[RMDB]
RNA sequence: GGGAACGACUCGAGUAGAGUCGAAAAGAUAUGGAAUGGCGUGGGAGUCUAUCUCCUCUUGAAAAGACAGUCGGAAACGACUGUCUUUUCAAGAGGAGUAAGGACGACGAUCACGCAUUCCUAAGUCCAUCUUAAUAGCCUUCGGGCUAUUAAGAUGAAAAGAAACAACAACAACAAC
Reactivity to DMS in 0.01 (KOAc 150mM, MgCl2 10mM, bicine 150mM(pH8.5), 24C), signal-to-noise 2, nucleotides 027 to 126: g000a150u010a300u000g010g020a050a000u010g010g030c010g050u000g010g000g010a190g020u010c010u000a300u010c000u010c000c000u000c000u010u000g000a010a010a010a020g010a020c020a000g020u000c010g010g000a090a070a200c010g020a020c000u010g020u000c000u000u000u000u000c000a010a010g010a010g000g020a010g000u000a040a110g010g010a050c080g010a070c210g000a180u010c000a010c020g010c000a030u000u010c000c000u010a060a140g000u000c050
About this RNA:
This 177-nucleotide RNA was probed chemically with DMS. DMS adducts were read by reverse transcription with MarathonRT. The RNA was probed in 150 mM KOAc, 10 mM MgCl2 and 150 mM bicine (pH 8.5) at 24 C.